[RMDB]
RNA sequence: GGGAACGACUCGAGUAGAGUCGAAAAUGAAUGGCACAUUAGUGGUUGCCCUUUGCUUCUCUUACCCACAGUAAACUCCACCUAUUGGAUGCCAUGACUGUUCACCAAGAGAAAACAUGGAACAGCAUAAGCGAAAGCGAUUCGUCGCUUUCGCUUAAAAAGAAACAACAACAACAAC
Reactivity to DMS in 0.01 (KOAc 150mM, MgCl2 10mM, bicine 150mM(pH8.5), 24C), signal-to-noise 2, nucleotides 027 to 126: u010g000a110a070u000g000g010c010a050c080a100u010u000a090g000u030g010g010u010u000g000c040c030c050u000u000u000g020c060u000u000c010u000c040u010u000a160c050c010c020a110c080a060g000u000a040a040a110c140u000c020c040a030c120c090u010a120u000u030g020g000a100u000g010c040c030a060u000g010a100c030u000g020u010u000c040a100c110c060a010a050g000a080g000a100a040a090a090c100a040u000g000g010a030a010c050a030g000c130a160
Reactivity to 2A3 in 0.01 (KOAc 150mM, MgCl2 10mM, bicine 150mM(pH8.5), 24C), signal-to-noise 1, nucleotides 027 to 126: u100g060a020a020u010g040g000c010a000c020a050u080u110a070g040u030g060g010u070u110g000c020c000c010u040u060u060g010c000u020u030c050u000c000u090u120a120c010c000c010a100c010a040g100u130a070a220a070c010u030c010c000a060c020c060u010a080u050u090g000g050a030u050g010c020c000a070u040g020a130c010u010g000u000u050c060a070c100c020a050a060g070a000g000a110a070a030a000c060a060u210g030g010a000a050c000a000g110c020a080
Notes
Structure probing data (DMS and 2A3) for a 177-nucleotide construct. The reactions ran in a buffer of 150 mM KOAc, 10 mM MgCl2 and 150 mM bicine (pH 8.5), at 24 C. Reactivities are given for positions 27 through 126. For DMS, 1,379 sequencing reads were counted. The 2A3 profile rests on 913 reads.